An RNA of 177 nucleotides, treated with 2A3 and DMS and read out base by base. Reactivities are rounded to 0.1 and cut off at 0 and 3. For DMS the reverse transcriptase was MarathonRT. For DMS, 2,227 sequencing reads were counted. For 2A3 the reverse transcriptase was SuperScript II with manganese. The reactions ran in a buffer of 150 mM KOAc, 10 mM MgCl2 and 150 mM bicine (pH 8.5), at 24 C.
RNA sequence: GGGAACGACUCGAGUAGAGUCGAAAAGACCAAGUUCGCUUGGUCCACUUAGCGAUGAUGAACUACUCCCGGCUGAGCUGUGAUGAACCACCUACCGGCUGAGGCGAAUAUAGGUUUCGACCUAUAAGACGAUUACUACUUUCGAGUAGUAAUCGUCAAAAGAAACAACAACAACAAC
Reactivity to 2A3 in 0.01 (KOAc 150mM, MgCl2 10mM, bicine 150mM(pH8.5), 24C), signal-to-noise 4, nucleotides 027 to 126: g000a000c000c010a010a010g010u040u090c180g000c130u000u000g000g000u020c020c000a080c040u110u150a030g040c040g140a090u070g030a060u100g030a110a060c020u070a040c020u040c020c000c000g030g000c040u040g020a040g010c050u020g030u050g100a150u100g020a060a050c030c010a030c020c010u050a050c000c020g010g000c060u020g020a040g050g000c030g040a110a010u100a010u010a040g000g040u040u060u060c190g070a040c010c010u010a010u010a040a040
Reactivity to DMS in 0.01 (KOAc 150mM, MgCl2 10mM, bicine 150mM(pH8.5), 24C), signal-to-noise 3, nucleotides 027 to 126: g000a050c000c000a000a030g010u000u010c300g000c010u000u000g000g000u010c000c090a050c100u000u000a080g010c050g010a070u000g000a160u020g000a080a060c040u000a100c090u000c030c030c020g020g020c050u000g010a060g020c100u000g020u000g010a090u000g000a100a140c120c040a050c040c050u000a090c090c020g010g010c040u000g020a090g000g010c030g030a090a100u000a000u000a040g000g020u000u000u000c190g000a040c010c010u000a010u000a040a090